Chemical mapping of a 177-nucleotide RNA with 2A3 and DMS. For 2A3, 2,198 sequencing reads were counted. The DMS profile rests on 2,112 reads. Values cover nucleotides 27 to 126.

[RMDB]
RNA sequence: GGGAACGACUCGAGUAGAGUCGAAAAAUAUGGUCAGCUUCACCGGCUCGACGCGUGCCGGCGUUGCCGUCAUGAAGCGGGCGGCCGAGACCGUGAAGCGCGUGACGCUGGAGCUUGGCGGCAAGUCCCGAGUGCUAGGAUUCGUCCUAGCACUCGGAAAAGAAACAACAACAACAAC
Reactivity to 2A3 in 0.01 (KOAc 150mM, MgCl2 10mM, bicine 150mM(pH8.5), 24C), signal-to-noise 3, nucleotides 027 to 126: a010u250a100u150g110g010u030c010a010g020c000u040u030c030a000c030c010g080g000c040u020c060g100a100c010g000c020g000u060g030c010c010g030g000c020g170u140u200g000c020c000g000u000c010a090u250g150a100a020g120c120g020g000g000c000g000g020c030c030g050a100g020a190c020c010g000u100g050a080a010g000c000g000c000g040u030g000a000c020g000c030u020g000g030a030g000c010u070u060g050g000c010g000g050c060a070a000g110u070c020
Reactivity to DMS in 0.01 (KOAc 150mM, MgCl2 10mM, bicine 150mM(pH8.5), 24C), signal-to-noise 1, nucleotides 027 to 126: a080u000a070u040g000g000u000c020a050g000c010u000u000c010a060c220c040g000g000c050u010c030g000a020c000g030c010g020u050g020c030c020g000g000c000g010u030u020g020c010c000g000u020c020a080u040g000a130a200g000c150g000g050g000c030g020g000c020c070g030a140g010a150c000c080g020u000g020a080a070g020c000g000c050g040u000g010a040c010g000c160u000g000g000a040g000c020u000u000g020g000c030g000g000c130a080a130g030u000c000

Conditions: 150 mM KOAc, 10 mM MgCl2 and 150 mM bicine (pH 8.5), 24 C. For DMS the reverse transcriptase was MarathonRT.